[RMDB]
The record gives the reactivity of an RNA of 177 nucleotides to 2A3 and DMS. Reactivities are given for positions 27 through 126. 2A3 adducts were read by reverse transcription with SuperScript II with manganese. The DMS profile rests on 40,822 reads.
RNA sequence: GGGAACGACUCGAGUAGAGUCGAAAAUCAAUAGUAGAAUCUUUUCGAUGGUCUUAUUCUACUAGGAGUAUGAAGAAGUACGAAAAGAACAUACUCAUUAGUCAGUAAUCGUACUUCACUGACUGAAGAUAGUAUUCUGAUUCGUCGGGAUACUAUCAAAAGAAACAACAACAACAAC
Reactivity to 2A3 in 0.01 (KOAc 150mM, MgCl2 10mM, bicine 150mM(pH8.5), 24C), signal-to-noise 9, nucleotides 027 to 126: u090c030a020a090u020a030g010u000a000g010a030a020u030c070u050u110u060u090c110g130a160u170g070g040u020c020u070u090a030u010u000c000u000a020c000u010a030g020g060a020g010u050a030u130g060a040a090g010a030a000g010u030a010c020g030a050a060a040a080g120a050a010c020a040u030a020c010u020c030a110u060u100a020g030u030c030a010g020u060a050a070u050c040g020u030a020c030u030u030c020a010c030u030g020a010c000u020g020a070a020
Reactivity to DMS in 0.01 (KOAc 150mM, MgCl2 10mM, bicine 150mM(pH8.5), 24C), signal-to-noise 9, nucleotides 027 to 126: u030c060a090a100u010a010g010u000a000g010a040a040u010c070u010u010u010u020c080g000a130u020g000g010u010c040u020u010a050u000u000c000u000a000c010u000a040g010g020a060g010u000a010u020g000a130a070g010a040a040g000u010a020c010g010a070a070a090a110g010a060a110c070a060u000a020c010u000c070a120u020u020a020g000u000c030a050g010u010a050a080u010c070g000u010a020c040u000u010c090a060c090u010g000a050c030u000g000a090a090